RNA sequence: GGGAACGACUCGAGUAGAGUCGAAAACUUUGCAGAGCUCGGCAUGAUGCCCGAGGAUAGUCCCCGCUGCCUGCACCGCACCGAGCGCUUUGGGGCGGUCAGCGUCCCCGUUGUCAUCCUGGAAGGCCCACUUACGCUAAUUCGUUAGCGUAAGUGGAAAAGAAACAACAACAACAAC
Reactivity to 2A3 in 0.01 (KOAc 150mM, MgCl2 10mM, bicine 150mM(pH8.5), 24C), signal-to-noise 5, nucleotides 027 to 126: c020u070u110u250g020c040a020g000a030g100c000u010c030g030g000c040a090u190g060a110u210g200c020c010c010g010a020g010g020a050u100a050g060u050c000c000c000c000g000c010u040g000c000c000u020g010c040a030c030c020g030c010a020c020c020g020a030g060c090g020c090u080u080u070g030g000g010g000c010g010g020u080c050a030g030c000g040u060c000c000c000c000g050u030u040g040u020c030a070u030c020c010u040g020g050a050a030g080g000c010
Reactivity to DMS in 0.01 (KOAc 150mM, MgCl2 10mM, bicine 150mM(pH8.5), 24C), signal-to-noise 2, nucleotides 027 to 126: c030u020u050u050g030c110a010g010a100g000c030u000c050g000g010c030a100u020g030a150u040g020c030c010c020g060a030g000g030a080u030a120g010u000c010c010c020c030g010c050u010g020c080c000u030g000c060a060c040c010g000c020a070c030c020g000a070g000c100g000c060u010u000u020g000g000g000g000c080g010g000u000c050a070g010c030g010u000c000c000c020c050g000u010u010g000u010c040a060u000c000c000u000g020g010a080a100g020g010c100
Background:
Structure probing data (2A3 and DMS) for a 177-nucleotide construct. For DMS, 4,147 sequencing reads were counted. For 2A3, 3,739 sequencing reads were counted. The RNA was probed in 150 mM KOAc, 10 mM MgCl2 and 150 mM bicine (pH 8.5) at 24 C. The data come from the RNA Mapping Database (RMDB), library OK1LIB.